Chemical mapping of a 177-nucleotide RNA with 2A3 and DMS. The reactions ran in a buffer of 150 mM KOAc, 10 mM MgCl2 and 150 mM bicine (pH 8.5), at 24 C. Source: RMDB library OK2TRN, as collected in RNAgym. DMS (dimethyl sulfate) methylates the pairing face of unpaired adenines and cytosines. 2A3 adducts were read by reverse transcription with SuperScript II with manganese. The 2A3 profile rests on 783 reads. Reactivities are rounded to 0.1 and cut off at 0 and 3.
[RMDB]
RNA sequence: GGGAACGACUCGAGUAGAGUCGAAAAGUGCGGAUUGAAAUUCAUGGGAGCCUCUCCAUAAUGGAUGAACGCCGCGUUAGUUCGCGCAGUCGCGACGUAAACGCUCUGUCUUCCCGUUCAGGCCUCAGCGGGAUAUACUGUUCGCAGUAUAUCCCGCAAAAGAAACAACAACAACAAC
Reactivity to 2A3 in 0.01 (KOAc 150mM, MgCl2 10mM, bicine 150mM(pH8.5), 24C), signal-to-noise 1, nucleotides 027 to 126: g050u050g010c010g000g080a140u090u200g050a180a110a060u080u050c020a030u070g000g030g010a010g100c020c060u180c000u000c120c010a060u110a240a050u110g000g010a010u070g000a000a050c000g000c000c040g010c030g030u030u020a030g050u060u040c000g060c020g010c100a050g190u240c020g000c000g020a010c010g020u010a000a150a050c030g020c000u060c060u030g020u010c000u070u030c010c000c000g000u190u080c060a010g110g000c030c000u100c010a010
Reactivity to DMS in 0.01 (KOAc 150mM, MgCl2 10mM, bicine 150mM(pH8.5), 24C), signal-to-noise 2, nucleotides 027 to 126: g020u020g030c010g000g000a110u010u000g020a080a090a070u000u000c060a020u010g000g020g010a070g000c220c110u000c140u040c000c000a070u000a110a020u000g010g000a060u000g030a080a090c070g000c020c040g010c030g010u010u000a080g000u000u000c110g020c100g000c170a080g030u010c080g020c000g010a020c030g030u000a090a060a110c020g010c040u010c040u020g000u000c040u000u010c020c000c010g010u000u010c120a060g000g010c060c070u000c070a130